[RMDB]
The record gives the reactivity of an RNA of 207 nucleotides to 2A3. Conditions: 150 mM KOAc, 10 mM MgCl2 and 150 mM bicine (pH 8.5), 24 C. For 2A3, 366 sequencing reads were counted. The data come from the RNA Mapping Database (RMDB), library OK3TST. For 2A3 the reverse transcriptase was SuperScript II with manganese. Reactivities are given for positions 27 through 156.
RNA sequence: GGGAACGACUCGAGUAGAGUCGAAAAUCUAGGUGUAGUGGGACCACACGGAGAUUUUUCAACCGUGUCACCUGUGCAAGUUACGCAUGCGGUACAUCUACCUGUUUUUGGAUCUCUAUAAUAAUCCUUUUCACAAUCUGAUGCAAAUGAUAUGCAAACCCUGUUGGUCUUUCGAGACCAACAGGGUAAAAGAAACAACAACAACAAC
Reactivity to 2A3 in 0.01 (KOAc 150mM, MgCl2 10mM, bicine 150mM(pH8.5), 24C), signal-to-noise 1, nucleotides 027 to 156: u070c030u020a000g000g040u040g020u000a080g060u020g000g010g000a050c040c000a010c070a040c060g070g020a080g050a080u210u000u040u260u200c120a130a030c000c020g000u000g010u020c030a030c120c000u030g000u000g010c070a130a140g030u220u140a100c110g020c010a000u130g060c030g030g000u010a030c030a080u030c030u030a000c020c030u050g010u000u010u120u000u050g000g000a040u010c000u010c130u120a100u080a300a120u150a000a000u170c070c000u120u070u150u140c020a100c010a130a070u160c030u100g040a060u100g060c000a000a000a120u170g040a140u230a000u180g080c080a150a030